[RMDB]
RNA sequence: GGGAACGACUCGAGUAGAGUCGAAAAGGAUAGGUGAAGCAAAGCUUCCGUGGAUAGGUGAAGCAAAGCUUCCGUGGAUAGGUGAAGCAAAGCUUUUGUGGACAGGUAAACCAAAACUUCCAUAGACCAAUAACACGGCAUUCGUGCCGUGUUAUUGAAAAGAAACAACAACAACAAC
Reactivity to DMS in 0.01 (KOAc 150mM, MgCl2 10mM, bicine 150mM(pH8.5), 24C), signal-to-noise 4, nucleotides 027 to 126: g000g010a120u020a090g000g040u020g010a020a040g020c010a040a180a230g010c010u000u000c000c010g010u010g010g010a180u020a080g020g030u010g040a030a020g010c000a040a130a160g000c010u000u000c000c040g040u010g000g010a160u010a050g000g020u010g010a140a070g000c030a030a080a140g020c040u000u000u000u000g010u000g010g020a080c210a040g010g000u000a030a060a240c090c040a050a060a050a110c090u000u000c010c020a050u000a100g000a120c220
Reactivity to 2A3 in 0.01 (KOAc 150mM, MgCl2 10mM, bicine 150mM(pH8.5), 24C), signal-to-noise 3, nucleotides 027 to 126: g050g040a080u150a070g060g110u200g070a020a010g010c030a120a150a060g020c050u040u000c010c030g080u180g050g090a100u100a200g130g020u180g090a000a000g000c000a040a120a000g010c000u010u000c010c020g030u070g030g050a070u090a140g050g060u150g050a010a020g000c000a070a120a040g000c020u080u090u070u080g060u020g010g030a020c060a080g070g040u090a070a070a000c010c010a070a030a040a040c030u050u030c040c010a040u030a020g050a040c040